[RMDB]
RNA sequence: GGGAACGACUCGAGUAGAGUCGAAAAGCGCAGGAAUACAUCCAACGCAUCGGCAUGGGCUUCUUGCUCGCGUCCGCCACGACCCGCAAUGCGGAGCGCGUGACGGCGGAGGAGAUUCGCCGCAACGCCGAGGAGUUGGAGAACUCGCUCGGUGGUGCCGAGUGGGAACGUUCGCGUUCCCACUCGGAAAAGAAACAACAACAACAAC
Reactivity to 2A3 in 0.01 (KOAc 150mM, MgCl2 10mM, bicine 150mM(pH8.5), 24C), signal-to-noise 4, nucleotides 027 to 156: g030c030g050c090a010g010g090a100a070u130a170c040a150u000c010c000a000a020c010g050c050a110u010c010g000g000c030a110u130g060g010g020c010u020u000c010u060u130g250c000u020c020g300c020g040u050c020c000g000c020c000a010c000g010a020c020c000c010g000c070a160a130u300g000c000g000g030a070g020c260g010c000g050u000g000a010c010g000g010c000g020g010a000g000g020a000g010a010u150u180c100g030c070c000g040c070a080a070c090g000c000c000g000a010g020g020a080g000u010u010g020g000a010g000a010a000c000u000c010g050c010u030c040g050g020u060g000g040u050g010
Reactivity to DMS in 0.01 (KOAc 150mM, MgCl2 10mM, bicine 150mM(pH8.5), 24C), signal-to-noise 1, nucleotides 027 to 156: g010c020g060c070a040g010g010a130a110u010a060c040a290u010c010c010a070a050c000g030c020a100u000c000g000g000c020a220u000g040g050g030c010u010u000c020u000u000g000c040u000c010g000c030g010u000c010c010g000c000c020a020c000g020a020c000c010c000g050c020a140a110u010g030c020g050g000a050g000c020g000c010g060u000g010a010c000g010g020c010g050g010a070g000g000a050g000a090u000u000c140g000c010c020g030c060a090a080c090g020c000c000g000a010g010g010a070g020u000u010g020g010a080g000a080a120c040u000c000g010c020u010c010g040g040u000g000g030u000g050